[RMDB]
RNA sequence: GGGAACGACUCGAGUAGAGUCGAAAAGAUAUGGACGGCGUGAUGACCUGUCCUCCCCACCGAAGUCGGAAACGACUUCGAGGGACAGCAAGCGCGGUCCUAAGUCAAACGCGAGUUCGCUCGCGAAGAACGUCUACUUGUUCGCAAGUAGACGUUCAAAAGAAACAACAACAACAAC
Reactivity to DMS in 0.01 (KOAc 150mM, MgCl2 10mM, bicine 150mM(pH8.5), 24C), signal-to-noise 2, nucleotides 027 to 126: g020a090u000a300u000g000g000a040c010g010g020c000g000u000g000a140u010g000a110c300c010u000g000u000c000c000u000c060c020c010c020a300c090c030g000a000a010g010u010c000g000g000a090a100a160c000g020a000c000u000u000c000g030a070g020g000g000a000c000a010g020c040a050a130g030c010g020c040g000g000u000c000c010u000a020a070g050u000c060a080a060a230c070g010c000g010a010g040u000u000c170g030c020u000c000g010c030g000a090a080
Reactivity to 2A3 in 0.01 (KOAc 150mM, MgCl2 10mM, bicine 150mM(pH8.5), 24C), signal-to-noise 2, nucleotides 027 to 126: g050a020u130a050u170g000g000a020c070g220g020c000g030u070g070a300u140g040a140c020c000u000g000u000c000c000u060c020c010c020c010a030c030c010g000a000a000g010u000c010g030g020a090a060a070c000g020a000c000u000u000c000g010a010g000g000g000a010c010a000g000c000a240a060g000c000g030c050g160g000u000c010c000u040a180a030g070u040c090a100a040a090c030g000c010g000a010g000u120u140c300g130c130u000c000g000c030g040a040a020
Source: RMDB library TTRDEL, as collected in RNAgym. An RNA of 177 nucleotides, treated with DMS and 2A3 and read out base by base. The 2A3 profile rests on 4,522 reads. The DMS profile rests on 1,513 reads.